The record gives the reactivity of an RNA of 207 nucleotides to DMS and 2A3.
RNA sequence: GGGAACGACUCGAGUAGAGUCGAAAAUGAGCUUUCGAGCUCAGAGAGACCUUUGUGUAGAGGCACGCAGCUUGGAUUUAGAAAUCCCAUUGGGAUUUCUUGUCAGCUGAGUGGUGCUACCCACCUACACUCUGGUACGGAGUCUGUUCGCAGACAAAUUUUCUUAUACCUUCGGGUAUAAGAAAAUAAAAGAAACAACAACAACAAC
Reactivity to DMS in 0.01 (KOAc 150mM, MgCl2 10mM, bicine 150mM(pH8.5), 24C), signal-to-noise 3, nucleotides 027 to 156: u010g000a040g010c010u000u000u000c240g020a060g040c010u010c020a040g000a200g000a180g010a050c010c010u000u000u000g020u000g020u010a020g000a120g020g020c010a020c030g000c000a020g040c010u000u010g030g010a050u000u000u000a010g000a030a040a020u000c000c000c010a300u000u010g060g060g020a010u000u010u000c000u000u000g010u000c030a050g010c000u000g000a040g020u000g020g030u000g020c030u000a020c030c030c020a300c100c010u010a040c010a020c000u000c030u000g010g020u000a040c070g000g010a100g000u000c010u000g000u000u000c220g020c020a070g020a100c050a040a080
Reactivity to 2A3 in 0.01 (KOAc 150mM, MgCl2 10mM, bicine 150mM(pH8.5), 24C), signal-to-noise 4, nucleotides 027 to 156: u050g010a000g010c030u130u090u230c240g100a010g000c010u020c030a000g020a010g000a020g010a020c000c000u020u010u000g000u000g010u000a010g000a030g000g000c000a000c020g030c000a010g010c000u120u230g150g010a060u300u300u090a020g000a000a010a000u010c060c020c110a300u210u300g010g000g010a000u000u000u000c000u000u020g020u010c020a000g000c010u000g000a050g090u220g070g030u020g020c000u030a050c020c020c020a060c000c000u000a000c000a010c000u000c010u020g000g020u030a080c040g090g060a070g000u010c020u070g040u080u170c300g030c080a010g020a020c000a000a150
Description
The data come from the RNA Mapping Database (RMDB), library RNAMAK.